[RMDB]
RNA sequence: GGGAACGACUCGAGUAGAGUCGAAAACGUCUGUUACAGUUUUGGAAGAUCAAUAUUACUCGCCUUUUACUCUUCUUUCGUUUUGAAGGAAAUAUGAGUGAAAUCAGAAGGACAAUCGUCGUUUUGAGUCUAUGUAAUGGUUCGCCAUUACAUAGACAAAAGAAACAACAACAACAAC
Reactivity to 2A3 in 0.01 (KOAc 150mM, MgCl2 10mM, bicine 150mM(pH8.5), 24C), signal-to-noise 5, nucleotides 027 to 126: c010g020u020c070u130g180u110u120a090c060a130g020u030u100u210u090g070g010a100a050g030a120u060c040a070a100u070a090u220u120a050c020u020c050g070c000c010u030u040u000u050a010c020u020c010u020u000c010u010u030u000c030g110u080u090u160u300g030a020a010g060g100a000a060a000u290a110u190g010a000g010u010g020a030a030a020u080c030a030g060a120a000g040g010a000c030a030a120u100c060g060u010c020g000u010u010u020u050g020a010
Reactivity to DMS in 0.01 (KOAc 150mM, MgCl2 10mM, bicine 150mM(pH8.5), 24C), signal-to-noise 5, nucleotides 027 to 126: c130g010u010c080u000g000u000u000a080c080a080g010u000u000u010u010g000g010a090a100g010a090u000c080a060a090u000a080u010u010a080c050u000c040g020c080c060u000u000u000u000a030c010u000c020u010u000c000u000u000u000c000g010u000u000u020u010g020a030a020g010g000a000a050a120u010a090u010g000a020g020u000g000a020a050a080u010c120a110g000a100a040g010g010a100c140a060a080u010c110g000u000c050g010u000u000u000u010g000a170

This 177-nucleotide RNA was probed chemically with 2A3 and DMS. Source: RMDB library RFMREP, as collected in RNAgym. The RNA was probed in 150 mM KOAc, 10 mM MgCl2 and 150 mM bicine (pH 8.5) at 24 C.